[RMDB]
RNA sequence: GGGAACGACUCGAGUAGAGUCGAAAAAGCAGGACGUGGUGGUGCAUGUCUGUAAUCCCACCUACUCGGGAAGCUGAGGCAGGAGAAUCGCUUAAACCCGGGAGGGGGAGGUUGCAGUGAACCGAGAGUAUUCUUUCGUGUUCGCACGAAAGAAUACAAAAGAAACAACAACAACAAC
Reactivity to DMS in 0.01 (KOAc 150mM, MgCl2 10mM, bicine 150mM(pH8.5), 24C), signal-to-noise 3, nucleotides 027 to 126: a100g010c030a070g010g000a060c090g050u000g000g010u000g020g000u000g020c070a050u000g010u000c000u010g000u010a070a090u000c000c010c010a090c060c020u000a130c010u010c020g000g010g000a070a080g000c050u000g030a050g000g040c060a160g010g020a140g010a080a070u010c060g010c020u000u010a090a100a300c000c010c000g030g000g010a230g000g010g000g000g000a030g010g000u000u000g010c030a040g000u010g000a060a070c030c030g010a080g000a150
Reactivity to 2A3 in 0.01 (KOAc 150mM, MgCl2 10mM, bicine 150mM(pH8.5), 24C), signal-to-noise 1, nucleotides 027 to 126: a030g040c040a020g010g030a010c020g050u030g010g000u000g000g060u060g040c030a040u060g030u050c010u000g010u010a000a030u020c010c010c010a050c030c010u200a300c000u030c020g030g000g030a080a010g000c110u150g010a030g090g000c060a030g070g160a140g100a070a070u060c040g020c020u070u040a130a080a100c000c020c000g020g010g000a040g000g040g000g000g000a040g000g020u060u040g000c030a060g000u000g080a030a040c020c010g010a040g000a000